[RMDB]
RNA sequence: GGGAACGACUCGAGUAGAGUCGAAAAGAUAUGGAGGUCUAUUCCUUCCAUACAGCUUUUGACGCCUGUAUGGGUCGGAAACGACCCGAAGGGCGAUAAGCUGUGGAAGGAAUAGACCUCCUAAGUCCUAUAGUCUGAGCUUCGGCUCAGACUAUAGAAAAGAAACAACAACAACAAC
Reactivity to DMS in 0.01 (KOAc 150mM, MgCl2 10mM, bicine 150mM(pH8.5), 24C), signal-to-noise 1, nucleotides 027 to 126: g000a110u000a280u010g000g010a010g020g040u000c000u000a010u000u000c020c000u000u020c000c020a140u000a110c030a000g040c000u000u000u000u040g000a300c110g000c000c010u000g010u030a300u040g010g000g000u010c010g000g000a150a170a290c040g020a020c000c000c000g020a210a300g000g010g030c030g010a030u000a000a010g000c000u000g010u000g000g000a030a000g010g000a010a020u000a000g020a000c010c000u000c000c010u000a000a020g000u000c020

The data come from the RNA Mapping Database (RMDB), library TTRINS. Chemical mapping of a 177-nucleotide RNA with DMS. For DMS, 927 sequencing reads were counted. For DMS the reverse transcriptase was MarathonRT.